[RMDB]
RNA sequence: GGGAACGACUCGAGUAGAGUCGAAAAACCGUAUAACCAUGUCAAAGUACCAUUUGCAAUGCAGUCAUUAGGCGCAUUAAGGCUAACGCCUACGCGUUACAUGAAAAACGGAGAACAAGCAGAACAAAAGACAACGGUUUUUCGAAACCGUUGUCUUAAAAGAAACAACAACAACAAC
Reactivity to 2A3 in 0.01 (KOAc 150mM, MgCl2 10mM, bicine 150mM(pH8.5), 24C), signal-to-noise 2, nucleotides 027 to 126: a010c000c000g010u000a100u010a090a090c070c060a050u020g080u130c020a030a000a140g050u000a110c110c090a050u000u030u170g040c090a030a090u030g040c020a060g160u040c020a060u040u050a090g070g000c000g010c000a000u100u170a140a010g000g000c000u000a030a060c140g040c030c110u060a000c070g010c000g000u000u090a030c030a020u100g000a060a000a000a000a000c090g000g000a080g030a040a000c060a030a050g100c080a020g110a060a000c040a040a170
Reactivity to DMS in 0.01 (KOAc 150mM, MgCl2 10mM, bicine 150mM(pH8.5), 24C), signal-to-noise 2, nucleotides 027 to 126: a000c000c030g010u040a010u000a120a090c200c080a030u020g000u000c010a130a010a110g000u000a120c020c050a070u020u000u050g000c170a130a060u000g000c000a200g050u000c010a090u000u020a200g000g000c000g000c000a000u000u020a140a150g040g070c000u000a090a070c210g000c000c080u000a090c180g000c020g040u000u000a100c180a000u000g010a070a060a100a140a040c090g000g000a060g010a160a040c140a080a030g070c110a140g000a100a030c220a020a020